Structure probing data (DMS and 2A3) for a 207-nucleotide construct. In probing experiments dimethyl sulfate is read out at A N1 and C N3, which are open when not base-paired. For 2A3 the reverse transcriptase was SuperScript II with manganese.
[RMDB]
RNA sequence: GGGAACGACUCGAGUAGAGUCGAAAAGGGGUCUUUCGAUAACUUGGAUUUAUUCUAGAGGUGUGGCUGAAGCCUCCACGGCCACACUACCCACCUAGAAUUGUCAGUUAUCAGAAAGACGGAGGCACCCAAAGGACGAGUCUUCGGACUCGUCCAAUCUUUUACAUGUGUUCGCACAUGUAAAAGAAAAAGAAACAACAACAACAAC
Reactivity to DMS in 0.01 (KOAc 150mM, MgCl2 10mM, bicine 150mM(pH8.5), 24C), signal-to-noise 1, nucleotides 027 to 156: g000g010g000g030u010c000u030u000u000c010g020a040u000a000a000c030u000u010g030g010a010u010u000u000a020u010u010c010u000a020g000a220g010g000u010g050u000g010g030c000u000g000a030a130g010c030c020u000c020c020a300c070g000g070c010c010a020c010a000c030u010a010c000c020c040a300c070c030u000a030g000a030a030u000u000g010u000c010a110g000u000u000a010u000c000a110g020a030a030a020g000a010c010g020g010a030g050g050c010a050c020c030c020a060a110a110g010g000a020c010g000a040g010u000c010u010u000c300g050g000a010c000u000c000g000u010c000c000a010a010
Reactivity to 2A3 in 0.01 (KOAc 150mM, MgCl2 10mM, bicine 150mM(pH8.5), 24C), signal-to-noise 3, nucleotides 027 to 156: g000g010g000g000u010c000u010u010u000c010g010a010u030a020a010c050u180u300g200g000a060u220u300u140a010u000u180c000u000a000g010a000g020g000u000g010u010g010g000c000u000g010a040a010g000c000c000u000c000c000a010c000g010g000c000c000a000c000a000c000u000a020c020c010c010a050c000c000u000a010g000a010a010u010u010g030u050c210a090g000u000u000a010u010c080a020g010a000a000a000g010a000c000g000g000a000g000g000c000a020c000c010c000a050a120a030g000g000a000c010g000a000g000u000c010u070u140c270g120g000a000c000u000c000g000u010c000c000a000a000

For DMS, 2,252 sequencing reads were counted.